[RMDB]
RNA sequence: GGGAACGACUCGAGUAGAGUCGAAAAAAGGCUUUAGAGCCAGUCUUGGCCACGGCCAACAUUGUGCUGACGAGACAGCAGUGGGAGACGUUGCACCCAUUCAAGCAUGACAGAGCGUACUCACCUGCAUACCGCAGUUGUUCGCAACUGCGGUAUGAAAAGAAACAACAACAACAAC
Reactivity to 2A3 in 0.01 (KOAc 150mM, MgCl2 10mM, bicine 150mM(pH8.5), 24C), signal-to-noise 2, nucleotides 027 to 126: a000a000g060g000c070u130u140u100a100g030a000g040c000c000a070g040u010c110u050u010g030g000c040c030a070c100g040g020c040c020a020a010c030a060u090u110g110u080g060c020u050g090a110c070g030a040g020a050c050a020g030c040a030g050u090g020g040g010a070g020a030c040g050u050u090g000c030a080c030c040c010a010u060u120c110a080a040g050c030a050u070g020a060c020a050g080a030g070c010g000u080a110c000u040c030a110c000c000u030g020
Reactivity to DMS in 0.01 (KOAc 150mM, MgCl2 10mM, bicine 150mM(pH8.5), 24C), signal-to-noise 4, nucleotides 027 to 126: a070a070g010g010c010u000u000u010a140g010a220g000c030c010a140g020u010c090u020u000g000g010c010c040a100c240g030g030c020c010a050a080c150a090u000u000g000u000g010c020u000g020a120c080g010a110g000a090c070a070g010c050a040g030u010g000g000g010a080g010a060c060g030u000u010g010c090a140c060c000c020a060u020u000c140a070a090g010c060a030u000g000a070c090a050g010a060g010c030g000u000a060c030u000c040a050c090c020u000g000

Chemical mapping of a 177-nucleotide RNA with 2A3 and DMS. For 2A3 the reverse transcriptase was SuperScript II with manganese. Values cover nucleotides 27 to 126. The 2A3 profile rests on 1,818 reads. DMS (dimethyl sulfate) methylates the pairing face of unpaired adenines and cytosines. For DMS the reverse transcriptase was MarathonRT. The RNA was probed in 150 mM KOAc, 10 mM MgCl2 and 150 mM bicine (pH 8.5) at 24 C. The data come from the RNA Mapping Database (RMDB), library OK2TST.